[RMDB]
RNA sequence: GGGAACGACUCGAGUAGAGUCGAAAAGAUAUGGAUAAGCGAGGAUCAUUAACAGCUUUGAUCUCGGAAACGAGGGAGCUGAGAUGGGAGCUUAUCCUAAGUCAAAACUGCUGCUUCGGCAGCAGAACUCUAUGAGGAUGUUCGCAUCCUCAUAGAGAAAAGAAACAACAACAACAAC
Reactivity to 2A3 in 0.01 (KOAc 150mM, MgCl2 10mM, bicine 150mM(pH8.5), 24C), signal-to-noise 4, nucleotides 027 to 126: g010a000u100a040u140g010g000a020u010a020a000g000c010g090a250g110g010a030u030c000a020u060u130a300a230c000a010g010c030u280u180u110g070a080u050c000u010c010g000g040a060a080a050c020g000a010g010g030g000a000g000c000u000g010a020g010a080u010g010g030g000a010g000c000u020u010a000u000c000c000u000a080a000g030u020c020a000a000a160a170c010u000g010c000u000g000c000u060u070c290g140g000c000a010g000c000a000g000a000a010
Reactivity to DMS in 0.01 (KOAc 150mM, MgCl2 10mM, bicine 150mM(pH8.5), 24C), signal-to-noise 3, nucleotides 027 to 126: g000a040u000a300u000g010g010a010u010a010a010g030c010g000a120g010g000a050u010c010a010u000u000a090a240c030a010g000c010u000u000u010g010a050u010c010u000c010g000g000a070a110a150c000g000a010g010g010g000a000g020c000u000g010a250g000a000u000g000g000g010a100g000c000u000u000a000u000c000c000u000a010a070g010u010c010a070a040a100a180c000u000g010c000u010g000c000u000u020c200g020g000c000a020g000c010a010g000a070a110
Annotation: An RNA of 177 nucleotides, treated with 2A3 and DMS and read out base by base. The 2A3 profile rests on 8,162 reads. Source: RMDB library TTRDEL, as collected in RNAgym. The RNA was probed in 150 mM KOAc, 10 mM MgCl2 and 150 mM bicine (pH 8.5) at 24 C.